Conditions: 150 mM KOAc, 10 mM MgCl2 and 150 mM bicine (pH 8.5), 24 C. The record gives the reactivity of an RNA of 177 nucleotides to DMS and 2A3. For 2A3, 26,391 sequencing reads were counted. Source: RMDB library TTRDES, as collected in RNAgym. The DMS profile rests on 10,147 reads. Reactivities are given for positions 27 through 126.
RNA sequence: GGGAACGACUCGAGUAGAGUCGAAAAGAUAUGGAUACAGUAGGACAUGCUCAGUUAUCGGAAACGAUAACGAGCAACAGCCUACGUAUCCUAAGUCAAAAGUCUAGCGGGUUCGCCCGCUAGACAACUCAUGUAUAUAGUUCGCUAUAUACAUGAGAAAAGAAACAACAACAACAAC
Reactivity to DMS in 0.01 (KOAc 150mM, MgCl2 10mM, bicine 150mM(pH8.5), 24C), signal-to-noise 5, nucleotides 027 to 126: g010a020u000a080u000g000g000a020u000a000c000a230g030u000a000g000g020a040c160a120u020g010c010u000c010a160g020u000u000a010u000c000g020g000a010a010a040c000g010a020u000a010a000c010g000a010g010c000a060a040c180a210g000c000c000u000a000c000g000u000a010u000c000c000u000a010a080g000u010c010a130a120a120a170g000u000c000u000a000g020c010g000g000g010u000u020c300g020c010c000c010g000c010u000a000g000a000c000a040a080
Reactivity to 2A3 in 0.01 (KOAc 150mM, MgCl2 10mM, bicine 150mM(pH8.5), 24C), signal-to-noise 2, nucleotides 027 to 126: g000a010u020a010u050g000g000a010u020a030c100a230g020u010a010g000g030a040c140a300u300g000c010u010c040a100g000u000u000a010u000c000g000g000a010a010a000c000g000a010u010a000a010c000g000a000g000c010a020a020c040a010g000c010c000u000a000c000g000u000a000u000c000c000u000a010a000g000u000c020a160a020a080a060g010u000c000u000a010g000c010g000g020g070u070u100c300g120c050c030c000g000c000u010a000g000a000c000a000a000